[RMDB]
RNA sequence: GGGAACGACUCGAGUAGAGUCGAAAAAGUGCCAGAGACAUACGUGGGUCGAAGUGGGGCAUAAAGCAAGGACGGUCCAGGGGCGAGUCGACCCCCCUCGGCACGAGGACGUGCCUGGUUUUGAGUGUGGGAGGAUGUCACGGACAAAUUUCGUGACGCAAAAUGUUAAGUUCGCUUAACAUUUUGCAAAAGAAACAACAACAACAAC
Reactivity to 2A3 in 0.01 (KOAc 150mM, MgCl2 10mM, bicine 150mM(pH8.5), 24C), signal-to-noise 4, nucleotides 027 to 156: a010g100u070g020c010c010a030g010a010g020a070c040a080u190a060c100g060u140g040g010g010u070c050g020a100a010g060u100g050g000g030g000c030a060u160a080a090a010g060c060a030a050g030g030a040c060g010g030u030c020c040a020g000g000g010g020c020g000a010g030u030c010g070a090c000c000c000c000c000c000u040c030g010g000c030a020c050g010a070g070g020a030c050g030u030g020c000c010u030g050g000u020u050u110u100g060a090g020u080g010u050g010g030g000a050g030g020a040u110g010u000c000a000c010g010g030a020c070a090a180a010u050u050u030c010g010u010g000a010c020
Reactivity to DMS in 0.01 (KOAc 150mM, MgCl2 10mM, bicine 150mM(pH8.5), 24C), signal-to-noise 3, nucleotides 027 to 156: a100g050u010g040c030c040a120g010a290g000a140c050a110u010a050c060g030u000g020g030g020u010c030g010a050a120g020u000g010g040g040g000c070a080u010a100a060a090g030c060a090a090g020g010a100c110g010g030u000c010c030a150g000g000g000g020c020g040a140g030u010c050g030a300c030c000c010c010c030c000u010c030g010g040c030a030c050g020a090g010g000a130c050g010u000g000c010c010u010g020g000u000u010u030u020g030a110g010u010g020u020g000g030g010a070g020g010a110u010g030u000c020a020c010g030g020a120c060a080a070a100u010u000u000c000g010u000g000a070c070